[RMDB]
RNA sequence: GGGAACGACUCGAGUAGAGUCGAAAAAGUUCUAGUCCUCACCUAAGAUCAGACUGACACGGCCCUCAAAGGAAGAGCACUUGGUUGGGCUUUGUGGUGGGGAUAAGUGUCUCAUUUUUAGUCCCAAAUUAAAAACGAGAUUUUGGGCUGUACAUCACCACUAGCAAAAUUUCGAUUUUGCUAGUGGAAAAGAAACAACAACAACAAC
Reactivity to 2A3 in 0.01 (KOAc 150mM, MgCl2 10mM, bicine 150mM(pH8.5), 24C), signal-to-noise 3, nucleotides 027 to 156: a000g030u080u020c030u050a010g050u060c010c010u010c000a010c020c010u050a100a030g030a140u090c030a070g170a260c100u130g000a010c010a010c050g000g000c000c010c000u030c060a080a070a000g040g020a100a060g060a030g110c030a020c110u040u060g040g030u140u050g000g000g000c000u050u040u120g060u050g000g000u000g000g000g020g000a010u020a010a000g030u040g030u010c000u010c050a090u110u120u050u070u090a010g060u090c010c000c000a010a000a020u060u070a050a040a000a010a020c070g040a080g010a150u030u040u030u060g010g000g000c030u050g040u160a080c070a090u080c020a020
Reactivity to DMS in 0.01 (KOAc 150mM, MgCl2 10mM, bicine 150mM(pH8.5), 24C), signal-to-noise 1, nucleotides 027 to 156: a130g020u000u000c020u010a270g000u000c000c010u000c000a060c020c000u010a100a070g010a080u000c080a110g010a150c040u000g000a100c050a080c030g100g020c000c000c000u000c050a020a150a120g010g000a130a170g000a070g040c040a080c030u000u000g010g020u000u010g030g010g000c020u000u000u000g020u010g000g030u000g030g000g040g000a010u000a000a080g010u010g010u000c010u000c010a040u000u000u000u000u000a070g020u000c060c060c090a070a050a100u040u000a000a010a000a020a030c010g010a050g000a080u000u000u000u000g000g020g000c040u000g000u000a080c130a140u000c060a300

Notes:
An RNA of 207 nucleotides, treated with 2A3 and DMS and read out base by base. The DMS profile rests on 2,711 reads. The reactions ran in a buffer of 150 mM KOAc, 10 mM MgCl2 and 150 mM bicine (pH 8.5), at 24 C. For 2A3 the reverse transcriptase was SuperScript II with manganese. It was measured as part of the RMDB library OK3TST.